[RMDB]
RNA sequence: GGGAACGACUCGAGUAGAGUCGAAAAGGGGAUCCUACCGGCGGUGUCGGGGCAGUUUGUGAGCCACGGCCUGCGCACGUUCGCAUACGAGGGCAGCCUCAACAUCAUGAAGGCCGUCACUGGGGGAGACGGCUACAUCAUUCGUGAUGUAGCCGUCAAAAGAAACAACAACAACAAC
Reactivity to 2A3 in 0.01 (KOAc 150mM, MgCl2 10mM, bicine 150mM(pH8.5), 24C), signal-to-noise 2, nucleotides 027 to 126: g020g010g000g030a010u010c000c020u040a050c030c000g000g010c030g020g030u040g030u090c020g010g000g060g000c020a040g010u140u300u240g150u120g100a000g000c000c020a030c010g000g000c000c000u070g000c050g010c000a050c020g030u150u140c110g000c160a040u080a230c010g000a090g030g090g000c020a020g000c000c040u060c040a030a060c030a160u200c020a010u170g100a080a040g030g000c020c010g010u010c010a010c070u070g000g000g000g000g000a030
Reactivity to DMS in 0.01 (KOAc 150mM, MgCl2 10mM, bicine 150mM(pH8.5), 24C), signal-to-noise 3, nucleotides 027 to 126: g020g000g010g020a220u000c020c000u010a110c070c000g000g020c030g010g020u010g010u010c010g020g000g000g020c000a110g010u010u010u020g020u000g010a090g010c010c040a100c030g000g000c010c020u010g010c050g010c070a090c080g020u000u000c260g040c090a090u000a050c090g000a060g000g000g010c050a030g000c020c020u000c030a040a100c070a090u010c150a070u000g000a050a030g010g010c010c010g010u000c020a040c110u000g000g010g000g000g010a170
Chemical mapping of a 177-nucleotide RNA with 2A3 and DMS. The RNA was probed in 150 mM KOAc, 10 mM MgCl2 and 150 mM bicine (pH 8.5) at 24 C. Source: RMDB library OK2TRN, as collected in RNAgym.